RNA sequence: GGGAACGACUCGAGUAGAGUCGAAAACAGCUGUGGAAUGUUUGGAUGACUUGCUACAGGCUGGGGAUGAACCUUUGGACUUGUGUACCCGGAAACGCCCCAGGCACUAAGUGCCACACAUGUGUGUUUACUUGAGGUGAUGUCAGUAUUUAUAGGGCACUAGUACUAGGUUCGCCUAGUACUAGUGAAAAGAAACAACAACAACAAC
Reactivity to DMS in 0.01 (KOAc 150mM, MgCl2 10mM, bicine 150mM(pH8.5), 24C), signal-to-noise 3, nucleotides 027 to 156: c050a060g020c040u010g010u010g010g010a080a070u000g030u000u000u000g000g010a140u000g010a080c030u000u000g020c030u000a090c050a050g000g020c030u000g020g010g030g020a170u000g000a080a080c030c020u000u000u000g020g010a090c060u000u000g030u010g020u000a080c040c000c040g020g000a070a070a050c050g010c050c040c010c020a050g020g010c010a050c030u010a050a120g030u000g010c030c000a080c050a050c070a120u010g010u010g030u000g000u000u000u010a050c070u010u000g010a070g030g020u010g000a110u000g010u000c020a070g020u000a070u000u000u000a120u000a070g010g020g000
Reactivity to 2A3 in 0.01 (KOAc 150mM, MgCl2 10mM, bicine 150mM(pH8.5), 24C), signal-to-noise 7, nucleotides 027 to 156: c020a000g030c030u020g010u050g050g050a090a080u070g060u100u110u050g090g030a070u100g020a060c030u040u080g030c010u060a050c030a060g070g010c020u020g000g010g000g010a060u080g050a040a110c020c000u030u070u110g050g020a030c040u130u080g040u050g020u170a110c010c020c010g030g030a060a110a020c060g010c010c000c010c020a030g020g000c000a010c030u110a150a070g020u000g040c010c000a020c010a000c020a050u090g050u020g010u010g020u100u080u090a080c030u040u100g060a030g030g020u040g020a030u060g040u030c010a000g030u030a100u060u150u030a190u130a040g010g000g000